[RMDB]
RNA sequence: GGGAACGACUCGAGUAGAGUCGAAAAGAUAUGGACCUGUGGUAGCAACAGCCGUAGGGUCGGAAACGACCUCACGGACAUGCUACGGUCCUAAGUCAAAACAGUAGCGCGUUCGCGCGCUACUGAAGUAAAUGACGCUGUUCGCAGCGUCAUUUACAAAAGAAACAACAACAACAAC
Reactivity to 2A3 in 0.01 (KOAc 150mM, MgCl2 10mM, bicine 150mM(pH8.5), 24C), signal-to-noise 2, nucleotides 027 to 126: g000a010u050a000u070g000g020a020c010c070u280g080u180g300g040u020a030g010c080a040a190c100a260g040c000c000g000u030a030g010g030g000u020c000g020g000a040a040a000c000g000a010c010c000u020c030a020c000g020g050a190c060a100u080g000c000u010a000c000g000g000u010c010c000u010a070a010g000u020c020a000a000a150a210c020a010g000u000a000g010c000g000c000g010u080u080c290g020c000g000c000g040c150u000a000c000u010g000a050a020
Reactivity to DMS in 0.01 (KOAc 150mM, MgCl2 10mM, bicine 150mM(pH8.5), 24C), signal-to-noise 2, nucleotides 027 to 126: g000a070u000a180u000g000g010a010c010c010u020g040u010g040g030u000a010g010c060a060a130c300a120g000c000c000g050u000a040g010g000g000u010c000g030g010a030a040a100c010g000a010c000c010u010c030a030c000g010g020a080c100a070u000g010c010u000a010c010g000g000u000c000c000u010a000a100g000u000c050a050a080a100a180c010a010g020u000a000g010c000g000c010g010u000u030c170g020c010g040c010g000c010u000a000c000u000g000a010a070
This 177-nucleotide RNA was probed chemically with 2A3 and DMS. The reactions ran in a buffer of 150 mM KOAc, 10 mM MgCl2 and 150 mM bicine (pH 8.5), at 24 C. Source: RMDB library TTRDEL, as collected in RNAgym. DMS adducts were read by reverse transcription with MarathonRT.